Notes:
Structure probing data (DMS and 2A3) for a 177-nucleotide construct. The DMS profile rests on 1,428 reads. Conditions: 150 mM KOAc, 10 mM MgCl2 and 150 mM bicine (pH 8.5), 24 C.
[RMDB]
RNA sequence: GGGAACGACUCGAGUAGAGUCGAAAACGCGUCAUGUUCGCAUGACGCGCAUUACCGAGAAUGGAGCUCGGUAUAAAACUCCAACCCUUGGAAACAAGGGAAAACCGAUAGUAUUCGUACUAUCGAAUCGGAUCACUAAAUUCGUUUAGUGAUCCGAAAAAGAAACAACAACAACAAC
Reactivity to DMS in 0.01 (KOAc 150mM, MgCl2 10mM, bicine 150mM(pH8.5), 24C), signal-to-noise 2, nucleotides 027 to 126: c030g000c000g020u000c000a010u000g010u000u000c200g030c000a000u000g010a000c020g000c000g000c040a050u010u000a300c000c000g020a000g000a170a130u000g000g010a070g060c000u000c000g020g000u010a030u000a040a010a040a100c030u000c010c010a050a300c000c000c000u000u000g000g000a200a090a170c010a020a000g000g000g000a010a010a130a110c160c000g000a010u000a000g000u000a020u020u030c190g020u000a000c000u000a000u000c000g000a080a110
Reactivity to 2A3 in 0.01 (KOAc 150mM, MgCl2 10mM, bicine 150mM(pH8.5), 24C), signal-to-noise 2, nucleotides 027 to 126: c020g010c000g000u020c010a000u000g010u050u070c170g000c130a000u000g010a010c000g000c000g000c010a010u040u240a060c010c020g000a000g020a050a220u120g030g020a020g030c010u000c010g000g030u020a000u000a000a010a000a000c010u000c010c020a120a180c020c000c010u000u010g010g020a060a060a020c000a000a000g020g000g020a040a000a000a040c030c010g000a000u000a000g010u000a020u060u070c210g030u010a020c010u000a000u010c000g010a030a040